[RMDB]
RNA sequence: GGGAACGACUCGAGUAGAGUCGAAAAAAAAAAGAACAGAAAUCAAUGAAGCACCGAGUGACAGGGACUGGAAGGUCCUAAUUCCAUGGGUAUUUACGGAACCCCUACGCCGUGUGGAGUCUUAUUCUAGACAGUGGGGACGAGGCCAUGAACAAGGAACAAUAAACACAUUCGUGUGUUUAUUGUUAAAAGAAACAACAACAACAAC
Reactivity to 2A3 in 0.01 (KOAc 150mM, MgCl2 10mM, bicine 150mM(pH8.5), 24C), signal-to-noise 3, nucleotides 027 to 156: a000a000a000a000a000a000g090a050a040c110a020g060a040a080a010u110c040a040a100u170g060a080a020g010c040a030c080c030g030a020g040u030g030a010c030a070g030g000g020a010c030u040g050g050a070a030g040g010u020c000c000u030a040a070u090u040c040c020a040u030g040g000g020u090a090u060u110u050a030c020g000g000a040a050c000c000c030c000u030a030c050g050c050c020g050u070g050u050g060g000a030g010u030c030u080u110a120u140u050c020u030a020g010a040c030a040g020u050g030g010g010g000a000c030g010a020g040g000c040c010a050u070g020a030a030c060a050a020g050g030
Reactivity to DMS in 0.01 (KOAc 150mM, MgCl2 10mM, bicine 150mM(pH8.5), 24C), signal-to-noise 2, nucleotides 027 to 156: a000a010a060a030a020a060g020a050a050c050a070g000a050a050a050u000c030a050a070u000g010a090a050g030c070a090c090c020g010a120g020u000g020a130c080a130g010g020g010a070c000u000g030g030a140a100g000g020u000c010c030u010a040a050u000u000c030c020a060u000g010g020g020u000a050u000u000u000a090c040g030g000a090a050c030c000c000c010u000a050c060g010c040c030g020u000g050u010g020g010a070g020u010c080u000u000a090u010u010c030u000a050g020a070c030a100g020u000g000g010g010g000a100c050g000a100g000g010c040c020a080u000g010a040a060c110a030a100g000g020